Chemical mapping of a 177-nucleotide RNA with 2A3 and DMS. Source: RMDB library TTRDES, as collected in RNAgym. The RNA was probed in 150 mM KOAc, 10 mM MgCl2 and 150 mM bicine (pH 8.5) at 24 C.
[RMDB]
RNA sequence: GGGAACGACUCGAGUAGAGUCGAAAAGAUAUGGACGUGUCUACGCAGCAACAGCGUAACUCGGAAACGAGUUACGACAUGCUGGUAGCACGUCCUAAGUCAAAACGGGUUUGUUCGCAAACCCGAAGCUAGUGAUCGAGUUCGCUCGAUCACUAGCAAAAGAAACAACAACAACAAC
Reactivity to 2A3 in 0.01 (KOAc 150mM, MgCl2 10mM, bicine 150mM(pH8.5), 24C), signal-to-noise 2, nucleotides 027 to 126: g050a010u060a020u180g010g010a010c010g000u030g090u200c020u000a050c140g100c300a010g050c000a010a170c040a200g100c010g000u010a000a000c000u020c000g030g010a090a080a020c010g000a000g000u000u000a000c000g050a030c020a010u050g000c020u010g020g010u000a000g000c010a000c000g000u000c010c000u010a000a000g020u000c000a020a000a020a100c030g010g000g010u040u000u020g070u070u080c300g010c160a000a040a000c000c020c000g010a010a000
Reactivity to DMS in 0.01 (KOAc 150mM, MgCl2 10mM, bicine 150mM(pH8.5), 24C), signal-to-noise 2, nucleotides 027 to 126: g010a000u020a300u000g000g000a000c020g050u000g000u000c020u000a000c000g030c030a020g010c040a020a080c300a150g020c020g010u000a000a000c000u000c050g000g000a130a130a200c010g000a000g020u000u010a000c040g000a050c110a090u020g030c000u000g000g050u010a010g000c000a050c020g010u000c000c000u010a010a020g030u000c040a050a040a140a210c040g030g010g020u000u000u000g000u000u010c280g000c000a000a000a050c010c000c000g000a040a130